[RMDB]
RNA sequence: GGGAACGACUCGAGUAGAGUCGAAAAAGUGAAGGGCCUAAGCCUUAGGGGCUGCUUGGGGGAAGUGUCAGUUAAGCUCAUGGGGUGAGUCUAGAGUUUGACUCACAAAAGGGGCUUGAUAACUGUCUGAAUGGCUUUUCUCCAGGACAGGGGAAAAGCCUUUUAGCUCAUUCGUGAGCUAAAAGGCAAAAGAAACAACAACAACAAC
Reactivity to DMS in 0.01 (KOAc 150mM, MgCl2 10mM, bicine 150mM(pH8.5), 24C), signal-to-noise 1, nucleotides 027 to 156: a090g020u000g020a130a050g010g000g050c020c040u000a090a160g040c000c040u000u000a080g020g000g010g000c020u000g030c020u000u020g020g020g000g010g000a010a090g060u000g000u000c030a180g020u010u010a030a040g000c020u000c000a090u000g020g000g000g000u000g000a020g030u000c000u000a130g000a180g020u010u000u000g010a020c020u010c010a020c020a010a090a200a140g030g010g000g000c010u000u010g020a030u000a030a080c050u030g000u000c070u000g010a070a080u000g020g000c040u010u000u000u000c000u000c020c020a070g000g000a090c090a020g020g000g020g000a030a020a040a080